The record gives the reactivity of an RNA of 177 nucleotides to DMS and 2A3. For 2A3, 1,272 sequencing reads were counted. It was measured as part of the RMDB library OK2TRN. High DMS reactivity at an A or C suggests that its Watson-Crick edge is free.

RNA sequence: GGGAACGACUCGAGUAGAGUCGAAAAAGUGCCGGGUAUAAUCAUGAUGUGUCCAUCUUACGUGCUUGGAUCCGCACGACUAAGGUCACCGGCGACCACCCGCUGGUGAUUGAGCGGGUCCGGGCUGUGAUAGCUCUUACUUCGGUAAGAGCUAUCAAAAAGAAACAACAACAACAAC
Reactivity to DMS in 0.01 (KOAc 150mM, MgCl2 10mM, bicine 150mM(pH8.5), 24C), signal-to-noise 3, nucleotides 027 to 126: a080g020u000g000c040c020g010g010g010u010a040u000a070a090u010c050a070u000g010a060u000g010u000g020u010c050c060a060u010c070u000u000a140c180g020u000g010c010u010u010g020g000a010u000c000c020g000c010a120c150g020a090c290u010a090a200g010g000u000c020a010c000c000g020g010c040g000a080c080c070a040c120c080c000g000c010u000g000g020u000g010a010u000u000g000a100g030c020g020g010g000u000c010c000g000g000g010c000u000g010
Reactivity to 2A3 in 0.01 (KOAc 150mM, MgCl2 10mM, bicine 150mM(pH8.5), 24C), signal-to-noise 1, nucleotides 027 to 126: a010g040u050g070c030c020g050g000g040u100a140u110a120a120u080c060a060u120g090a020u080g070u010g040u000c030c010a060u050c090u100u140a040c110g070u080g030c010u020u010g000g000a010u000c000c010g050c030a050c080g180a090c140u090a090a020g020g000u000c000a000c020c000g030g010c010g020a060c020c020a080c020c010c000g010c020u010g000g000u020g000a050u070u070g020a050g040c000g010g030g000u000c000c000g000g020g000c000u000g030